[RMDB]
RNA sequence: GGGAACGACUCGAGUAGAGUCGAAAAAAAUCGGCACAGAGAUAGGGCCCAAAGUAUCACUGAUUGACACAUCCAGUACCAUUACUAUCCCAGCUAACAUUGGGCUGUUAGGUUCAAAGAUCAGCCAAAUGGCCUUCAUUUUCGAAUGAAGGCCAUUAAAAGAAACAACAACAACAAC
Reactivity to 2A3 in 0.01 (KOAc 150mM, MgCl2 10mM, bicine 150mM(pH8.5), 24C), signal-to-noise 2, nucleotides 027 to 126: a000a050a000u100c000g020g000c000a050c020a090g030a010g030a070u080a180g030g050g010c010c000c000a010a030a010g110u090a050u060c040a000c110u050g040a090u100u020g010a020c000a000c010a110u050c000c000a010g020u040a110c010c010a030u120u040a040c030u070a030u020c010c000c000a030g020c130u060a020a060c000a090u100u140g030g010g010c000u000g050u020u110a110g000g100u070u120c040a000a130a000g030a030u020c010a000g030c000c000a000
Reactivity to DMS in 0.01 (KOAc 150mM, MgCl2 10mM, bicine 150mM(pH8.5), 24C), signal-to-noise 3, nucleotides 027 to 126: a030a050a050u040c080g010g000c010a090c040a080g000a090g000a060u010a030g030g010g000c010c000c030a130a030a040g000u010a030u010c090a050c020u020g000a040u020u020g020a100c090a030c030a070u000c040c030a050g020u020a060c120c010a030u000u000a060c070u000a110u000c020c000c000a090g020c150u010a030a060c100a110u020u010g020g010g000c000u000g000u010u000a030g010g000u020u030c150a070a070a100g000a050u000c070a030g010c000c070a060
The data come from the RNA Mapping Database (RMDB), library OK1LIB.
An RNA of 177 nucleotides, treated with 2A3 and DMS and read out base by base.
The reactions ran in a buffer of 150 mM KOAc, 10 mM MgCl2 and 150 mM bicine (pH 8.5), at 24 C.
For 2A3 the reverse transcriptase was SuperScript II with manganese.